An RNA of 177 nucleotides, treated with 2A3 and DMS and read out base by base. Values cover nucleotides 27 to 126. High DMS reactivity at an A or C suggests that its Watson-Crick edge is free. Conditions: 150 mM KOAc, 10 mM MgCl2 and 150 mM bicine (pH 8.5), 24 C. The data come from the RNA Mapping Database (RMDB), library M2PK50. For 2A3 the reverse transcriptase was SuperScript II with manganese.
[RMDB]
RNA sequence: GGGAACGACUCGAGUAGAGUCGAAAAUGUGGUUCCUUCGGGAACCACACACUACCGAGAAUGAUCCUCGGUAUAUAAAUCAAACCCUUGGAAAGAAGGGAACACUCCCUAGCUUCGGCUAGGGAAACAUAUGCAACCAGUUCGCUGGUUGCAUAUGAAAAGAAACAACAACAACAAC
Reactivity to 2A3 in 0.01 (KOAc 150mM, MgCl2 10mM, bicine 150mM(pH8.5), 24C), signal-to-noise 3, nucleotides 027 to 126: u060g000u000g010g030u000u010c030c000u010u030c190g020g000g000a010a000c010c000a000c000a000c000a010c000u050a000c010c010g010a010g020a070a270u270g040a090u120c000c010u000c000g000g000u010a010u000a000u020a050a030a020u050c080a030a050a300c000c000c020u040u050g150g300a230a110a090g040a050a000g030g010g000a040a020c030a020c020u030c000c000c000u010a000g010c000u040u030c280g080g010c020u000a000g010g000g000a010a000a000
Reactivity to DMS in 0.01 (KOAc 150mM, MgCl2 10mM, bicine 150mM(pH8.5), 24C), signal-to-noise 4, nucleotides 027 to 126: u020g020u000g000g010u000u000c000c000u020u000c220g040g020g010a010a010c000c000a010c000a000c120a100c080u000a010c010c000g000a000g010a190a150u010g000a120u010c090c010u010c010g000g000u000a010u000a030u020a020a040a040u010c200a070a090a120c000c000c000u000u000g030g010a140a100a140g000a020a000g000g020g010a140a080c200a100c120u000c000c000c010u000a010g010c000u000u010c170g010g000c000u000a010g000g000g000a000a020a060